[RMDB]
RNA sequence: GGGAACGACUCGAGUAGAGUCGAAAAGAGCCAUAUGUCGUGAAUAGUUUAGUCCAGAGAGCAGAAAAGUUUAGGCCUCUCAUUCAUUCCUUGGGAGACUUUCCUGUAUUUAUAAAAGACAAGGUAACAUGACUCUGCAAUUCGUUGCAGAGUCAUGAAAAGAAACAACAACAACAAC
Reactivity to 2A3 in 0.01 (KOAc 150mM, MgCl2 10mM, bicine 150mM(pH8.5), 24C), signal-to-noise 2, nucleotides 027 to 126: g050a020g050c030c000a060u120a100u170g080u080c070g060u120g090a130a040u090a100g070u070u020u110a040g040u000c000c000a010g010a000g000a000g040c040a000g040a070a050a060a020g050u060u100u100a090g020g050c000c000u000c000u000c000a000u080u020c000a000u090u110c020c040u060u060g000g040g000a120g040a000c000u000u110u030c000c000u040g090u030a160u060u300u010a100u100a070a050a010a000g040a040c030a000a060g060g030u060a060a040
Reactivity to DMS in 0.01 (KOAc 150mM, MgCl2 10mM, bicine 150mM(pH8.5), 24C), signal-to-noise 2, nucleotides 027 to 126: g000a100g000c020c080a130u040a050u010g000u000c000g000u000g050a040a010u020a080g030u010u020u000a080g000u000c040c040a080g000a070g000a120g020c040a110g000a060a050a020a070g000u010u010u000a090g000g000c120c000u000c000u000c030a050u000u070c100a110u030u030c010c010u030u000g000g030g040a040g000a070c050u030u000u000c000c010u000g000u000a060u010u040u020a170u000a060a030a080a110g000a030c040a060a050g000g020u030a060a180

The record gives the reactivity of an RNA of 177 nucleotides to 2A3 and DMS.
Reactivities are given for positions 27 through 126.
It was measured as part of the RMDB library OK1LIB.
The DMS profile rests on 2,602 reads.